[RMDB]
RNA sequence: GGGAACGACUCGAGUAGAGUCGAAAACAGUACUGUUCAGCAGAUUAUCAGGCGCAACUGAAGCGGCAUAAUCUGCGUGGAAGUAUGAGCGCAAAAGGUUGCUGCUACGAUAAUGCCUGCGUGGAAAGUCAUUGUGCAAGUUCGCUUGCACAAUGACAAAAGAAACAACAACAACAAC
Reactivity to 2A3 in 0.01 (KOAc 150mM, MgCl2 10mM, bicine 150mM(pH8.5), 24C), signal-to-noise 1, nucleotides 027 to 126: c020a000g080u190a040c040u100g010u150u120c020a010g000c010a020g020a080u000u000a020u020c040a020g020g060c030g010c000a030a000c010u070g000a070a020g060c000g030g000c000a000u000a030a030u020c040u050g110c030g050u050g020g040a100a000g040u030a010u030g020a060g220c010g000c000a000a010a100a030g030g000u000u010g000c160u130g030c010u070a010c210g020a010u000a030a000u030g200c020c010u010g000c010g110u100g000g080a030a060a000
Reactivity to DMS in 0.01 (KOAc 150mM, MgCl2 10mM, bicine 150mM(pH8.5), 24C), signal-to-noise 3, nucleotides 027 to 126: c090a150g000u020a060c100u000g020u010u000c020a090g010c000a010g020a040u000u000a010u000c020a230g010g000c020g000c020a040a040c030u000g000a190a170g010c000g000g010c010a010u000a020a040u000c010u000g020c180g030u010g000g000a060a090g010u000a000u010g000a050g020c000g020c000a040a070a150a300g000g000u000u000g010c020u010g010c030u000a080c230g000a020u000a020a010u000g000c250c020u000g000c020g040u000g020g000a040a100a090